RNA sequence: GGGAACGACUCGAGUAGAGUCGAAAAUUGAUAGCUAUGCUUAGUGUAAUGUGUAACUAUAGAGAGUAAUUUAAAGACUGUCACCUCUGCGUGAUUGCAAGUGAACAGUGCCCCUGUGGAAGAGCUCUGUAAAUGGCCUUUUCGAAGGCCAUUUACAAAAAGAAACAACAACAACAAC
Reactivity to DMS in 0.01 (KOAc 150mM, MgCl2 10mM, bicine 150mM(pH8.5), 24C), signal-to-noise 3, nucleotides 027 to 126: u020u020g010a060u010a020g010c030u000a010u010g020c020u030u000a110g000u000g020u040a060a050u040g020u010g020u000a010a030c020u000a010u000a090g010a120g000a100g010u000a030a050u000u020u010a040a010a070g010a070c000u000g000u000c000a000c000c000u000c000u010g000c000g010u000g000a100u100u080g000c000a010a070g000u000g000a060a020c000a000g010u010g000c030c000c000c170u000g010u020g020g010a070a060g010a110g000c040u000c070
Reactivity to 2A3 in 0.01 (KOAc 150mM, MgCl2 10mM, bicine 150mM(pH8.5), 24C), signal-to-noise 2, nucleotides 027 to 126: u120u090g030a000u010a010g030c010u020a000u030g000c040u140u020a080g080u140g140u300a130a120u030g020u000g010u060a000a050c000u000a040u140a030g050a000g010a030g090u160a070a270u070u080u230a010a010a000g040a000c000u000g000u000c000a000c000c000u000c000u040g000c020g130u110g120a210u040u300g000c000a140a000g000u040g010a080a020c050a000g000u030g000c000c000c000c040u010g050u240g050g060a040a000g060a030g020c020u000c080